RNA sequence: GGGAACGACUCGAGUAGAGUCGAAAACAACAUUGGCAGUAUUAGCAUCAAUGAAACACCGGAGACCAACACGUGAAGAACCCGAUGCGAACCCAAUUGUGAACCCAUCGCAAAACGCCCAUCGCCCAUCGCCCAUGGCACGUGCAUUUGAGCAUUAACUACGGUCAUAUUUCGAUAUGACCGUAGUAAAAGAAACAACAACAACAAC
Reactivity to 2A3 in 0.01 (KOAc 150mM, MgCl2 10mM, bicine 150mM(pH8.5), 24C), signal-to-noise 1, nucleotides 027 to 156: c050a000a010c010a050u040u030g000g000c020a030g080u230a110u180u200a070g030c010a020u050c020a030a100u140g080a080a100a040c050a040c030c040g060g030a080g050a020c020c030a040a050c050a010c090g040u120g040a110a140g040a110a140c060c060c060g010a010u040g000c000g010a020a030c010c010c000a050a030u150u110g040u020g030a020a040c000c010c000a040u050c040g020c100a040a070a060a030c040g010c000c020c040a010u030c030g010c000c020c010a030u040c030g030c000c000c000a000u070g010g010c010a010c070g020u040g030c040a060u050u070u120g020a050g000c040a050u140u100a040
Reactivity to DMS in 0.01 (KOAc 150mM, MgCl2 10mM, bicine 150mM(pH8.5), 24C), signal-to-noise 1, nucleotides 027 to 156: c000a160a110c060a080u030u010g000g030c050a070g040u010a140u010u000a180g000c070a160u000c030a050a130u010g010a210a160a020c030a120c010c000g040g000a150g000a120c020c020a050a060c010a020c030g000u000g010a100a180g000a150a140c070c050c030g010a100u000g020c030g020a110a100c020c010c010a090a140u000u000g080u000g020a070a160c000c010c020a050u010c050g040c080a000a030a070a060c050g040c040c010c030a080u020c100g030c030c000c010a050u000c050g000c020c000c010a140u000g010g010c090a020c010g000u000g000c070a140u000u010u000g110a060g030c050a180u000u000a160
Record summary
Chemical mapping of a 207-nucleotide RNA with 2A3 and DMS. Conditions: 150 mM KOAc, 10 mM MgCl2 and 150 mM bicine (pH 8.5), 24 C. For 2A3 the reverse transcriptase was SuperScript II with manganese.